[RMDB]
Source: RMDB library OK3TST, as collected in RNAgym. Structure probing data (DMS and 2A3) for a 207-nucleotide construct.
RNA sequence: GGGAACGACUCGAGUAGAGUCGAAAACGCAUGCGAAAGGAUGGUGGCAAGGAUGGGAAAGCAUGCCAUUAACCAGGAAUAUACAUCGCGUACGGAAACCAUCCUGCAUGCGAAAGGAUGGAUCCAUCCGAAACGUACGCGGAUGGGAAAGCAUGCCAUCCGCGGCUCGUUUCGACGAGCCGCGGAUAAAAGAAACAACAACAACAAC
Reactivity to DMS in 0.01 (KOAc 150mM, MgCl2 10mM, bicine 150mM(pH8.5), 24C), signal-to-noise 1, nucleotides 027 to 156: c020g000c000a070u000g000c000g010a090a110a110g000g050a020u000g020g020u020g000g020c060a110a240g020g000a020u080g000g020g000a040a100a010g010c050a000u000g010c000c050a060u000u020a070a300c060c040a110g110g010a060a100u030a200u000a190c110a070u010c020g000c020g000u000a000c020g020g010a140a090a050c000c000a020u000c020c000u020g000c060a070u000g030c000g000a010a030a070g020g010a150u010g000g000a110u000c000c000a020u000c030c000g000a020a100a060c030g050u000a020c030g000c020g030g000a100u000g010g000g000a020a160a050g010c000a060u010g140c000c010
Reactivity to 2A3 in 0.01 (KOAc 150mM, MgCl2 10mM, bicine 150mM(pH8.5), 24C), signal-to-noise 2, nucleotides 027 to 156: c010g000c000a000u010g000c020g140a220a070a040g010g000a020u030g000g020u010g070g060c080a120a090g040g020a020u120g000g020g070a030a070a030g020c020a000u020g000c030c000a090u130u100a100a040c030c010a050g050g110a150a070u210a030u070a110c050a040u030c010g000c000g000u040a020c010g000g070a110a130a040c010c020a000u030c050c000u020g010c010a000u030g010c000g000a050a010a000g040g030a050u120g030g020a040u040c000c000a000u000c010c000g010a100a090a040c020g000u000a000c010g010c000g010g000a020u010g000g000g000a030a030a000g010c030a000u030g000c020c000
For DMS, 1,745 sequencing reads were counted. For DMS the reverse transcriptase was MarathonRT.